[RMDB]
RNA sequence: GGGAACGACUCGAGUAGAGUCGAAAAAAAAAAGAUAUGGAGAGGAAGAGGAGGCUUAAGCCCGCCUGUUCGGAAACGAACAGGCGCUCCUUAAGCUACCCACCCUCCCUCUCCUAAGUCAAAAAAACCUAUUAGUAACGUUCGCGUUACUAAUAGGAAAAGAAACAACAACAACAAC
Reactivity to DMS in 0.01 (KOAc 150mM, MgCl2 10mM, bicine 150mM(pH8.5), 24C), signal-to-noise 1, nucleotides 027 to 126: a020a000a090a070a070a100g000a110u000a290u000g020g000a020g000a000g000g000a080a060g000a070g040g050a290g000g020c000u000u000a000a020g020c300c300c020g000c030c020u000g020u000u010c060g000g020a120a010a070c010g040a050a010c000a040g010g000c000g020c110u010c050c000u000u000a000a000g040c000u000a000c120c180c100a280c090c020c000u000c000c010c010u000c000u000c000c000u000a050a120g050u000c020a020a000a110a080a020a090a100
Annotation:
The data come from the RNA Mapping Database (RMDB), library TTRDES. Chemical mapping of a 177-nucleotide RNA with DMS. Values cover nucleotides 27 to 126.